[RMDB]
RNA sequence: GGGAACGACUCGAGUAGAGUCGAAAAAGAGAUCGCUGGGAAUACGAAGAGCACUGUGGCUCAACAGCUAUCUGAAGCGCGCACGGAUAGACAUGAGCCACUGUGCUCCCGUAUUCCUGUGCUGAAGCGCGCACGGCAACCGAAAGGUGCGAAUAAAUCAUUACCACUCGUUCGCGAGUGGUAAUGAAAAAGAAACAACAACAACAAC
Reactivity to 2A3 in 0.01 (KOAc 150mM, MgCl2 10mM, bicine 150mM(pH8.5), 24C), signal-to-noise 2, nucleotides 027 to 156: a000g120a030g000a050u020c000g010c010u000g020g000g000a010a010u000a000c000g010a070a060g010a020g020c000a000c010u010g020u000g020g010c000u000c020a110a140c120a190g020c000u000a000u000c000u010g040a220a070g010c000g000c000g020c000a000c030g000g000a000u000a010g020a010c300a300u300g000a000g010c010c000a020c000u000g010u000g000c000u000c000c000c000g020u010a000u000u000c000c000u000g000u000g000c000u000g020a100a020g010c010g000c000g000c020a020c020g000g000c010a000a000c000c020g060a070a030a000g000g000u010g000c010g000a000a000u170a020a010a010